Chemical mapping of a 177-nucleotide RNA with DMS and 2A3. DMS adducts were read by reverse transcription with MarathonRT. For 2A3, 8,947 sequencing reads were counted.

[RMDB]
RNA sequence: GGGAACGACUCGAGUAGAGUCGAAAAUAAUCAAGAUGAAUCGUUUUUAGUUUGCUUGCUUACCUUAUGGGCCAGUAUGAGAUCUACUUGAAUCUUUUUAUGUAGGCAGAAAGCGACGGAAUUUAAAAAUCGAUAAUACUUUCGAGUAUUAUCGAUUAAAAGAAACAACAACAACAAC
Reactivity to DMS in 0.01 (KOAc 150mM, MgCl2 10mM, bicine 150mM(pH8.5), 24C), signal-to-noise 6, nucleotides 027 to 126: u040a070a070u020c080a050a090g000a130u030g010a080a080u020c060g010u010u020u000u020u010a080g020u010u010u020g010c030u000u000g000c040u010u010a070c050c060u010u030a080u030g000g000g030c090c050a050g010u010a020u000g000a100g010a030u010c080u010a070c120u010u010g000a050a080u010c020u000u000u010u010u010a030u030g000u000a030g000g010c030a060g010a060a050a050g000c030g010a040c070g010g020a050a060u010u010u030a030a060a100
Reactivity to 2A3 in 0.01 (KOAc 150mM, MgCl2 10mM, bicine 150mM(pH8.5), 24C), signal-to-noise 8, nucleotides 027 to 126: u180a010a050u130c070a030a040g060a110u160g090a070a130u090c060g060u010u020u020u080u080a150g010u030u070u170g020c020u020u010g000c000u010u020a040c000c000u110u090a070u180g020g010g010c000c010a020g010u020a020u120g070a050g010a060u000c010u030a040c020u060u040g010a060a060u040c020u000u130u020u020u020a070u150g020u010a020g030g000c010a010g100a100a050a010g020c010g020a020c020g020g090a050a050u100u140u260a140a180a030